Annotation
An RNA of 177 nucleotides, treated with DMS and 2A3 and read out base by base. For 2A3 the reverse transcriptase was SuperScript II with manganese. The 2A3 profile rests on 866 reads. The DMS profile rests on 4,559 reads.
RNA sequence: GGGAACGACUCGAGUAGAGUCGAAAAGUUUUUUAUCGCACGGUUGCCCCAGUGAGAGAAGGCUCCGGUGGAUUGCUCUAUUGGUUUGGGCUGUGUAAUGGUUGCGCGCUGAGGGUAUAACCAUUGGCUAAAUAUAAAAAUUCGUUUUUAUAUUUAGAAAAGAAACAACAACAACAAC
Reactivity to DMS in 0.01 (KOAc 150mM, MgCl2 10mM, bicine 150mM(pH8.5), 24C), signal-to-noise 2, nucleotides 027 to 126: g000u000u020u010u010u000u020a070u020c060g020c060a060c100g010g020u020u010g010c040c050c000c030a030g000u020g000a160g000a130g010a150a110g000g000c030u010c020c040g000g020u040g000g010a050u020u010g000c040u000c020u030a110u020u010g000g010u010u010u000g000g000g000c010u000g000u000g010u020a050a050u030g000g010u010u000g010c080g000c050g000c010u000g000a110g010g010g030u010a030u030a050a040c030c010a140u010u020g000g010
Reactivity to 2A3 in 0.01 (KOAc 150mM, MgCl2 10mM, bicine 150mM(pH8.5), 24C), signal-to-noise 2, nucleotides 027 to 126: g020u020u000u020u000u060u090a130u100c020g010c000a050c060g030g040u070u040g010c010c000c020c000a020g010u020g100a160g000a010g040a150a080g100g000c000u020c100c020g000g000u000g040g040a030u010u130g000c000u000c020u060a110u020u120g060g050u090u060u090g020g000g000c010u020g000u020g020u090a090a100u060g020g000u060u060g030c070g010c010g000c030u010g000a120g000g000g020u030a060u080a080a010c000c000a010u050u080g050g000